Chemical mapping of a 177-nucleotide RNA with 2A3 and DMS.
The 2A3 profile rests on 1,459 reads.
The reactions ran in a buffer of 150 mM KOAc, 10 mM MgCl2 and 150 mM bicine (pH 8.5), at 24 C.
RNA sequence: GGGAACGACUCGAGUAGAGUCGAAAAAGAGUUUAUCUUCGUAGGUUUACAGUUUGUCUUUUCUGCUGAGAGCUUACCGGGUUAAACUUUUCCGGGAGGAUUAUUGUGCAGCAAUACUGUGAAUUAACCACUGCAUAGUAUUCGUACUAUGCAGUGGAAAAGAAACAACAACAACAAC
Reactivity to 2A3 in 0.01 (KOAc 150mM, MgCl2 10mM, bicine 150mM(pH8.5), 24C), signal-to-noise 2, nucleotides 027 to 126: a000g060a000g000u090u160u100a080u050c040u140u060c100g090u060a070g070g000u000u050u010a020c000a010g010u100u100u100g100u080c050u040u250u150u000c030u060g010c010u020g050a060g000a010g150c010u040u000a070c010c020g000g050g010u080u100a060a110a090c000u120u020u070u050c000c000g020g060g000a050g010g020a050u090u110a070u250u280g090u080g060c010a020g000c030a060a060u040a180c010u010g000u030g060a010a050u070u020a100a030
Reactivity to DMS in 0.01 (KOAc 150mM, MgCl2 10mM, bicine 150mM(pH8.5), 24C), signal-to-noise 3, nucleotides 027 to 126: a050g020a050g010u000u010u010a070u010c010u000u000c170g020u000a080g010g000u000u000u000a060c010a020g000u000u000u000g010u010c110u000u000u010u020c050u000g000c010u000g010a300g010a070g010c010u000u000a060c010c050g010g000g000u000u010a040a070a130c170u010u010u010u000c000c000g010g000g010a030g000g000a050u000u000a050u000u010g000u000g010c030a040g010c080a020a050u010a180c050u010g000u010g000a040a040u000u000a090a260

It was measured as part of the RMDB library OK2TST. DMS adducts were read by reverse transcription with MarathonRT.